[RMDB]
RNA sequence: GGGAACGACUCGAGUAGAGUCGAAAACAGACUCGAGCGAAAGCUCGGCGAAAGCCGCGUACAUGUGAUGGUCGGCUAGUGUACAGUCGACAGUUACUCUUCGGAGUAACAAUAGAAACAACAACAAAAAUUAAUCCGGAUUCGUCCGGAUUAAUUUAAAAGAAACAACAACAACAAC
Reactivity to 2A3 in 0.01 (KOAc 150mM, MgCl2 10mM, bicine 150mM(pH8.5), 24C), signal-to-noise 4, nucleotides 027 to 126: c050a010g100a100c010u010c040g000a000g010c000g070a110a020a020g000c010u020c010g000g000c020g040a080a030a000g030c030c020g050c020g030u060a060c070a130u170g040u100g070a120u190g090g010u020c010g000g000c000u050a060g070u060g080u250a070c040a030g030u020c000g010a010c020a020g010u000u000a000c010u010c000u010u150c260g060g000a000g000u000a010a000c000a000a010u210a090g140a060a100a000c060a020a000c000a030a000c010a050a110
Reactivity to DMS in 0.01 (KOAc 150mM, MgCl2 10mM, bicine 150mM(pH8.5), 24C), signal-to-noise 5, nucleotides 027 to 126: c100a130g010a090c100u010c010g000a010g000c000g020a100a090a150g000c000u010c000g010g010c030g000a110a110a160g000c060c000g030c080g000u010a070c120a080u010g000u010g010a110u030g010g000u010c010g020g000c000u010a040g000u040g010u030a060c080a030g010u010c010g010a060c100a120g000u000u000a000c000u000c000u000u050c130g050g000a010g010u000a010a010c000a090a060u030a080g010a180a090a060c100a050a070c210a070a080c120a050a080